[RMDB]
RNA sequence: GGGAACGACUCGAGUAGAGUCGAAAAGAUAUGGAAUAAAGAGUGAGCUCCCACCCAAGGGAGCUCGCAGUCGGAAACGACUGAUGAGCGAGGAUCUUGGUGGGAGCUCACUCUUUAUUCCUAAGUCCCUAUAAUCAAGGUUCGCCUUGAUUAUAGGAAAAGAAACAACAACAACAAC
Reactivity to DMS in 0.01 (KOAc 150mM, MgCl2 10mM, bicine 150mM(pH8.5), 24C), signal-to-noise 2, nucleotides 027 to 126: g000a130u020a300u010g010g010a050a010u010a000a010a010g010a050g030u000g020a030g020c000u000c000c000c000a020c160c080c060a010a010g000g000g010a040g040c010u000c010g010c000a000g010u000c000g010g010a130a140a270c010g010a010c000u000g010a050u000g010a010g010c000g010a110g020g000a020u000c010u000u000g000g030u000g010g000g010a020g000c000u000c000a000c000u000c000u000u000u010a000u000u000c000c000u000a030a100g000u000c030
Structure probing data (DMS) for a 177-nucleotide construct. For DMS the reverse transcriptase was MarathonRT. Values cover nucleotides 27 to 126.